[RMDB]
RNA sequence: GGGAACGACUCGAGUAGAGUCGAAAAUGGGAAGGAAGGUAGCCCCUCCGCGGAGACAUGCAGGAGGUGGCCCAUGGGACCUUGGCAGGGAGUGAAGAGGUGGGGCUGAGCCUGGAGAAACCCUACCCAGUUUUCCUUUGUUCGCAAAGGAAAACUGAAAAGAAACAACAACAACAAC
Reactivity to DMS in 0.01 (KOAc 150mM, MgCl2 10mM, bicine 150mM(pH8.5), 24C), signal-to-noise 1, nucleotides 027 to 126: u010g020g030g020a150a090g000g000a140a070g050g030u010a150g010c020c000c000c000u000c010c010g040c000g000g000a230g000a080c170a050u000g020c030a120g030g000a060g000g010u000g010g020c020c050c050a040u000g020g000g020a140c080c030u000u010g000g000c080a090g000g020g020a160g000u000g000a200a120g000a060g010g030u000g000g000g000g020c020u000g000a130g000c000c030u010g030g020a190g010a130a090a060c030c010c000u000a150c020c010
Structure probing data (DMS) for a 177-nucleotide construct. The reactions ran in a buffer of 150 mM KOAc, 10 mM MgCl2 and 150 mM bicine (pH 8.5), at 24 C. It was measured as part of the RMDB library OK2TRN.